[RMDB]
RNA sequence: GGGAACGACUCGAGUAGAGUCGAAAAUUAGUCUGAUCUAAUAAUACAUGCAGGUGGGAAAUUCGGUGAAACACAACAAAUGAGGUUUCAGUUAUUUGGGCUCGUGAGAGCAGCCUGGGGAACCUGGAUCAACGGGCAUGUUCGCAUGCCCGUUGAUAAAAGAAACAACAACAACAAC
Reactivity to 2A3 in 0.01 (KOAc 150mM, MgCl2 10mM, bicine 150mM(pH8.5), 24C), signal-to-noise 1, nucleotides 027 to 126: u080u090a030g000u000c190u180g010a030u000c000u040a090a000u010a190a020u180a140c090a030u180g000c000a000g030g000u120g000g000g030a000a130a130u150u260c000g150g000u000g000a030a020a030c090a000c060a060a150c060a020a150a000u300g000a000g010g000u000u040u040c000a000g010u120u060a250u060u180u040g030g000g090c000u000c000g090u190g000a130g050a010g090c000a000g000c000c000u020g010g000g010g010a000a000c050c000u000g200g000
Reactivity to DMS in 0.01 (KOAc 150mM, MgCl2 10mM, bicine 150mM(pH8.5), 24C), signal-to-noise 1, nucleotides 027 to 126: u020u030a000g000u000c040u050g020a070u070c020u000a140a010u000a150a150u000a180c190a070u080g100c090a020g040g010u020g010g020g000a100a060a080u000u020c140g060g020u000g010a020a000a010c050a030c070a060a030c300a020a160a140u000g000a090g000g040u000u000u000c040a010g040u030u010a080u050u070u000g020g020g010c000u000c020g070u120g000a060g050a000g020c020a080g060c000c000u020g000g000g000g000a100a020c060c030u030g000g050
The record gives the reactivity of an RNA of 177 nucleotides to 2A3 and DMS. The reactions ran in a buffer of 150 mM KOAc, 10 mM MgCl2 and 150 mM bicine (pH 8.5), at 24 C. It was measured as part of the RMDB library RFM100. 2A3 adducts were read by reverse transcription with SuperScript II with manganese.